[RMDB]
Description:
Chemical mapping of a 177-nucleotide RNA with DMS and 2A3. Conditions: 150 mM KOAc, 10 mM MgCl2 and 150 mM bicine (pH 8.5), 24 C. Values are in units of 0.01, from 0 to 300, in steps of 10. For DMS, 1,634 sequencing reads were counted.

RNA sequence: GGGAACGACUCGAGUAGAGUCGAAAAUGAAGACGCGCUGUGGGGAGAAAAACCGGUUGCUGAGGUGAUCGCCCGCACCCACGCCGCCGGCGUGGAAGAGGUGGUGGUGAAGCGCGGCGCGGAUGCCAUGCGUACGGAUGUUCGCAUCCGUACGCAUAAAAGAAACAACAACAACAAC
Reactivity to DMS in 0.01 (KOAc 150mM, MgCl2 10mM, bicine 150mM(pH8.5), 24C), signal-to-noise 1, nucleotides 027 to 126: u010g020a110a090g030a110c000g000c010g050c000u000g020u010g020g000g000g020a070g000a040a050a010a100a010c100c000g000g000u000u000g010c080u110g030a230g000g000u000g010a080u020c030g040c040c010c000g000c120a130c140c060c000a000c100g020c000c000g010c270c110g010g030c020g010u000g000g000a030a050g000a120g000g020u030g000g050u010g010g040u020g010a100a130g040c030g000c000g040g010c030g020c000g000g010a030u000g000c070c070
Reactivity to 2A3 in 0.01 (KOAc 150mM, MgCl2 10mM, bicine 150mM(pH8.5), 24C), signal-to-noise 2, nucleotides 027 to 126: u180g020a040a030g130a050c020g000c000g000c010u020g010u040g010g060g040g010a170g200a130a220a080a030a000c050c030g040g020u130u110g020c060u020g000a060g070g050u030g020a060u030c030g040c010c070c000g020c000a000c000c000c000a010c010g030c000c060g180c080c110g030g050c040g020u070g030g100a100a030g030a020g020g050u090g010g060u030g030g090u020g020a090a010g060c010g000c010g010g020c040g010c000g060g020a070u100g080c050c010